This 177-nucleotide RNA was probed chemically with 2A3 and DMS. Values cover nucleotides 27 to 126. DMS adducts were read by reverse transcription with MarathonRT. It was measured as part of the RMDB library TTRDES. DMS (dimethyl sulfate) methylates the pairing face of unpaired adenines and cytosines. 2A3 is a SHAPE reagent: it acylates the 2'-hydroxyl of flexible nucleotides of all four kinds.
[RMDB]
RNA sequence: GGGAACGACUCGAGUAGAGUCGAAAAGAUAUGGAAGCUCCUGUACGAGUACCCCCGGUCGGAAACGACCGGCGUACGAUGAGUACAGGGAGCUUCCUAAGUCAAAACCUCACGUUCGCGUGAGGAAGAUCAACUCCAAGUUCGCUUGGAGUUGAUCAAAAGAAACAACAACAACAAC
Reactivity to 2A3 in 0.01 (KOAc 150mM, MgCl2 10mM, bicine 150mM(pH8.5), 24C), signal-to-noise 1, nucleotides 027 to 126: g000a010u100a020u160g000g010a020a000g000c010u000c030c020u000g020u010a010c020g080a080g050u000a010c080c080c000c000c000g010g000u000c030g030g050a100a090a060c010g000a000c010c000g000g010c000g000u010a010c030g070a300u300g100a050g030u010a010c000a000g180g040g020a020g000c000u000u000c000c010u000a000a000g000u000c020a010a010a090a170c000c010u010c000a000c010g030u110u120c300g060c000g230u010g030a020g000g000a020a030
Reactivity to DMS in 0.01 (KOAc 150mM, MgCl2 10mM, bicine 150mM(pH8.5), 24C), signal-to-noise 2, nucleotides 027 to 126: g000a060u010a300u000g000g000a020a010g050c000u010c010c000u000g000u000a040c000g000a170g000u010a040c010c040c220c050c040g030g000u020c010g030g000a140a070a220c000g000a030c010c000g010g040c300g000u000a000c000g000a200u010g070a300g000u000a000c030a040g000g010g000a000g000c010u000u000c000c030u010a000a070g020u000c030a110a120a130a040c000c000u010c000a010c000g000u010u030c220g000c010g060u010g000a000g000g000a010a060